[RMDB]
RNA sequence: GGGAACGACUCGAGUAGAGUCGAAAAGUAUCCAUUGAGCAGCUCAAAUAUAUGAUGGCCGUUAAGAUGUCCCCUCCGCGCAAUGCGUUUGAGGUUCUUUUGGCUAACUUACGCUUGCUGGGCCUCGGUGGUGUGCGUAAUAUUGCCAUCUCCACUGCUCUUAUAUUAGGUUCGCCUAAUAUAAGAGAAAAGAAACAACAACAACAAC
Reactivity to 2A3 in 0.01 (KOAc 150mM, MgCl2 10mM, bicine 150mM(pH8.5), 24C), signal-to-noise 8, nucleotides 027 to 156: g060u050a060u080c020c020a030u030u090g030a030g030c060a010g010c030u050c100a050a170a030u180a030u050a090u170g090a070u060g040g020c020c030g080u070u090a050a030g030a100u090g160u180c030c020c000c000u020c030c010g010c000g000c090a140a210u260g000c020g060u040u060u150g030a020g000g000u040u080c020u030u100u060u120g010g000c000u020a080a040c040u060u080a030c060g040c060u030u080g020c040u030g010g030g000c000c010u030c030g010g010u010g000g010u060g030u080g030c020g020u050a080a090u090a140u180u110g030c010c010a060u020c020u000c040c020a040c040u060g010
Reactivity to DMS in 0.01 (KOAc 150mM, MgCl2 10mM, bicine 150mM(pH8.5), 24C), signal-to-noise 3, nucleotides 027 to 156: g020u010a070u000c030c020a120u000u010g010a080g030c040a130g020c020u010c040a070a070a140u000a160u000a080u000g000a200u000g010g010c010c030g040u000u000a050a070g030a090u000g000u000c000c030c000c010u000c090c060g040c030g030c050a150a100u000g000c020g030u000u000u010g010a160g000g010u000u000c020u000u000u010u000g000g000c010u000a020a070c070u000u000a050c080g010c070u000u000g040c070u000g030g010g010c030c020u000c020g000g020u000g000g030u010g010u010g020c040g000u000a080a160u000a090u000u000g020c010c030a170u000c030u010c030c040a100c180u000g000
Structure probing data (2A3 and DMS) for a 207-nucleotide construct.
The reactions ran in a buffer of 150 mM KOAc, 10 mM MgCl2 and 150 mM bicine (pH 8.5), at 24 C.
For DMS the reverse transcriptase was MarathonRT.